The record gives the reactivity of an RNA of 207 nucleotides to DMS and 2A3.
Values cover nucleotides 27 to 156.
It was measured as part of the RMDB library OK3TST.
The RNA was probed in 150 mM KOAc, 10 mM MgCl2 and 150 mM bicine (pH 8.5) at 24 C.

RNA sequence: GGGAACGACUCGAGUAGAGUCGAAAACGUACGUGGAGACACGUACGACGAGACUUCGGUCUCGAAUCGGGCGGAGUUUAGGCGCCCUCGUGUUAGGAGUCGGUUGUCGGCGAGCCAACGGACUCAAGAGCUAACACGAUAUUUUAUGCCUGAACUGGCUUGAGAAGUAAUUCGUUACUUCUCAAGCAAAAGAAACAACAACAACAAC
Reactivity to DMS in 0.01 (KOAc 150mM, MgCl2 10mM, bicine 150mM(pH8.5), 24C), signal-to-noise 4, nucleotides 027 to 156: c030g010u000a010c010g040u000g000g000a300g020a300c000a010c000g010u010a010c020g000a090c050g010a250g000a030c010u000u000c230g010g000u000c000u000c000g000a030a020u010c040g010g010g030c030g000g000a080g000u000u000u000a010g020g030c000g000c070c050c070u010c000g020u000g010u000u000a030g030g010a050g020u010c020g000g040u000u000g020u000c010g020g040c150g020a290g030c190c020a040a050c000g010g020a010c010u000c030a060a060g010a250g010c030u000a020a020c010a020c000g010a030u000a010u000u010u000u000a080u010g030c010c020u000g010a030a020c020u000g020
Reactivity to 2A3 in 0.01 (KOAc 150mM, MgCl2 10mM, bicine 150mM(pH8.5), 24C), signal-to-noise 4, nucleotides 027 to 156: c010g000u000a000c000g010u000g000g020a030g020a040c000a000c000g000u000a000c000g000a020c000g010a000g010a000c040u090u100c240g080g020u030c010u000c000g010a030a120u150c060g000g000g000c010g020g060a110g050u000u000u010a000g010g000c000g010c000c000c010u010c000g010u010g010u000u000a020g010g030a010g000u020c140g030g020u050u010g010u010c030g020g150c210g080a010g000c000c000a010a000c010g110g000a000c000u010c020a040a040g120a040g140c000u000a000a000c010a000c000g000a000u000a010u000u070u020u030a070u110g030c010c000u000g000a000a010c020u030g060